RNA sequence: GGGAACGACUCGAGUAGAGUCGAAAAACCUAUGGAUUCGUCCAUAGGUGCUGGCGCGCGGCCUUUGUCCUCUCGCGUGUGCGUGGUGGGCGAUAUACGCGCAAUAGUGACAAUUCGUUGUCACUAAACAAAAAAUACCAUUCGUGGUAUUUUUUGUAAAAGAAACAACAACAACAAC
Reactivity to 2A3 in 0.01 (KOAc 150mM, MgCl2 10mM, bicine 150mM(pH8.5), 24C), signal-to-noise 1, nucleotides 027 to 126: a010c000c000u000a000u000g000g010a020u020u090c200g050u020c060c000a000u000a000g000g000u010g060c090u060g060g100c050g000c000g000c010g060g050c000c000u030u000u040g000u000c000c000u010c010u040c000g020c040g100u300g240u300g150c010g020u060g020g150u060g020g010g010c010g000a000u020a000u010a060c000g010c010g000c000a000a040u100a020g000u010g010a000c000a010a020u070u070c230g070u090u010g000u000c000a000c000u040a110a170
Reactivity to DMS in 0.01 (KOAc 150mM, MgCl2 10mM, bicine 150mM(pH8.5), 24C), signal-to-noise 7, nucleotides 027 to 126: a020c000c000u000a000u010g000g000a020u000u010c190g010u010c000c000a010u000a000g010g010u000g000c080u000g010g020c120g010c010g020c020g010g000c060c080u000u000u000g010u000c010c000u000c020u000c000g020c010g020u010g020u020g020c010g020u000g010g010u000g010g010g010c010g000a020u000a210u000a060c020g010c000g010c030a120a110u000a010g010u000g000a020c000a010a050u000u010c180g010u000u000g000u000c000a010c000u000a010a090